[RMDB]
An RNA of 207 nucleotides, treated with DMS and 2A3 and read out base by base. The DMS profile rests on 3,307 reads. For 2A3 the reverse transcriptase was SuperScript II with manganese. For DMS the reverse transcriptase was MarathonRT.
RNA sequence: GGGAACGACUCGAGUAGAGUCGAAAAAGAACAGUACUCAAUCAAUAGCAAUUAUGAAACAAUAUAUCGUCCUGGCAUGCAUGUGCCUGGCGGCAGCUGCUAUGCCUGCCAGUCUUCAAUCAUUUUCAUCCUCAUCCUCGUGUACGGAAGAAGAAAAGUUUAUUAGCUGUUUCGACAGCUAAUAAACAAAAGAAACAACAACAACAAC
Reactivity to DMS in 0.01 (KOAc 150mM, MgCl2 10mM, bicine 150mM(pH8.5), 24C), signal-to-noise 2, nucleotides 027 to 156: a040g020a050a090c040a100g010u000a080c000u010c040a100a120u000c070a070a180u000a000g020c040a110a150u000u000a110u000g000a090a080a090c080a070a080u000a110u010a090u000c020g000u000c070c060u000g000g040c080a040u000g000c090a080u000g020u000g000c030c050u000g050g030c070g040g030c110a080g050c060u000g040c090u000a100u000g040c030c010u010g030c040c000a040g010u000c020u000u010c050a070a110u030c080a110u000u000u000u000c040a140u010c010c010u020c060a080u010c010c010u010c080g000u000g030u010a060c110g000g010a070a070g000a050a080g000a040a040a100a160
Reactivity to 2A3 in 0.01 (KOAc 150mM, MgCl2 10mM, bicine 150mM(pH8.5), 24C), signal-to-noise 6, nucleotides 027 to 156: a010g060a060a020c040a040g040u080a040c030u040c100a050a090u050c020a040a120u100a080g040c040a060a090u140u070a090u290g070a070a070a030c080a110a050u120a020u030a040u240c060g020u030c010c010u000g010g010c010a000u020g010c010a010u100g030u040g130c020c020u010g060g000c020g040g000c020a020g020c010u090g010c010u050a010u050g000c010c010u010g010c000c000a020g020u010c030u070u080c030a070a190u050c040a070u040u030u080u060c020a040u050c010c020u030c010a070u080c020c020u030c050g020u040g000u060a010c050g020g030a020a050g030a050a000g020a010a120a000a000